[RMDB]
RNA sequence: GGGAACGACUCGAGUAGAGUCGAAAAAAGGUGCCAUCAUAUCGGUUAAGAACUCUUAACUCUGAUGGCUUUCGAGUUAUGUGGUGCAUUGAAGCUCUCCCUUCAAAUGGUCGUACAGUACCGUGAAGAGGCAGGAUUAUUUCGAUAAUCCUGCCUCAAAAGAAACAACAACAACAAC
Reactivity to DMS in 0.01 (KOAc 150mM, MgCl2 10mM, bicine 150mM(pH8.5), 24C), signal-to-noise 1, nucleotides 027 to 126: a070a070g000g010u010g000c010c000a010u000c010a060u000a120u010c270g000g000u000u000a030a050g020a210a120c300u030c010u000u000a000a020c010u010c120u040g030a010u000g010g040c010u010u000u000c030g000a140g010u010u010a080u010g000u030g040g010u010g000c030a050u000u010g010a060a100g010c050u000c020u050c050c020c000u040u000c040a020a060a000u010g000g010u000c010g000u030a160c100a000g010u010a020c040c080g000u000g010a100a030